This 177-nucleotide RNA was probed chemically with DMS and 2A3. For 2A3 the reverse transcriptase was SuperScript II with manganese. The data come from the RNA Mapping Database (RMDB), library OK1LIB. In probing experiments dimethyl sulfate is read out at A N1 and C N3, which are open when not base-paired. Conditions: 150 mM KOAc, 10 mM MgCl2 and 150 mM bicine (pH 8.5), 24 C.
RNA sequence: GGGAACGACUCGAGUAGAGUCGAAAAUCAAAAAGAGUUUGAUGAUGCAAUAGAGAAACUGGAGAGGAUAUUUGGAAUUGUAUCAUAUUCUCCUGCAAUAUCCACCAAAUCCACUUUUGAGGAUAUACCAGGACUGGAUAUUCGUAUCCAGUCCUGGAAAAGAAACAACAACAACAAC
Reactivity to DMS in 0.01 (KOAc 150mM, MgCl2 10mM, bicine 150mM(pH8.5), 24C), signal-to-noise 2, nucleotides 027 to 126: u000c010a010a050a050a180a030g020a100g020u010u000u000g040a110u020g000a010u030g010c070a020a010u030a050g000a130g020a050a060a060c060u050g040g020a100g010a250g030g040a120u040a030u000u010u040g010g040a070a060u000u000g000u000a010u010c000a030u000a090u030u010c070u020c000c030u010g020c010a040a140u000a040u000c010c040a160c170c010a030a010a090u010c030c110a090c150u000u050u060u000g000a220g000g000a040u030a020u040a160
Reactivity to 2A3 in 0.01 (KOAc 150mM, MgCl2 10mM, bicine 150mM(pH8.5), 24C), signal-to-noise 3, nucleotides 027 to 126: u100c050a050a030a070a030a040g090a050g020u040u020u060g100a110u000g000a010u050g010c000a030a020u100a070g170a020g010a090a130a050c150u100g150g040a110g070a060g060g030a060u040a070u170u110u140g110g000a110a070u000u040g000u020a020u000c010a000u060a070u160u060c090u010c010c010u030g000c020a030a020u010a030u000c000c000a040c010c050a100a020a000u020c100c030a070c090u030u180u100u060g070a040g000g040a020u040a000u040a180